[RMDB]
RNA sequence: GGGAACGACUCGAGUAGAGUCGAAAAGCAUAUAAUCUUGUCUCUGCAUCAGGUUUCCGCCUUUGGUGUUAUAAGACCUUUGAUAUUUAUAAUCUCUGGUCUACUUUUACAAAAGUUCAAGGUUUGGCUGAUAGUUCUAGUUCGCUAGAACUAUCAGAAAAGAAACAACAACAACAAC
Reactivity to 2A3 in 0.01 (KOAc 150mM, MgCl2 10mM, bicine 150mM(pH8.5), 24C), signal-to-noise 2, nucleotides 027 to 126: g000c040a020u140a000u030a230a070u040c010u010u030g030u030c010u030c040u080g000c000a050u000c010a020g000g020u020u120u050c030c020g010c000c000u100u070u070g010g000u030g040u040u070a140u040a110a010g010a010c000c010u000u040u010g030a020u020a100u090u240u110a180u120a110a110u010c000u000c000u000g030g000u000c000u000a020c010u060u120u060u090a050c040a000a110a010a040g020u030u090c010a020a000g060g000u030u020u070g070g010
Reactivity to DMS in 0.01 (KOAc 150mM, MgCl2 10mM, bicine 150mM(pH8.5), 24C), signal-to-noise 2, nucleotides 027 to 126: g010c090a100u000a080u020a070a030u000c010u010u000g000u010c050u000c120u000g000c020a080u000c050a030g000g010u000u000u010c120c090g020c040c020u000u010u020g010g000u000g000u000u000a090u000a130a030g000a020c000c000u000u000u010g010a020u000a130u010u010u000a180u000a180a040u000c000u000c040u000g000g020u000c020u000a050c060u000u000u010u010a120c240a120a040a060a040g000u000u010c090a050a010g000g020u000u000u000g010g010
Source: RMDB library 15KREP, as collected in RNAgym. Structure probing data (2A3 and DMS) for a 177-nucleotide construct. Values are in units of 0.01, from 0 to 300, in steps of 10. 2A3 adducts were read by reverse transcription with SuperScript II with manganese. DMS adducts were read by reverse transcription with MarathonRT. The reactions ran in a buffer of 150 mM KOAc, 10 mM MgCl2 and 150 mM bicine (pH 8.5), at 24 C.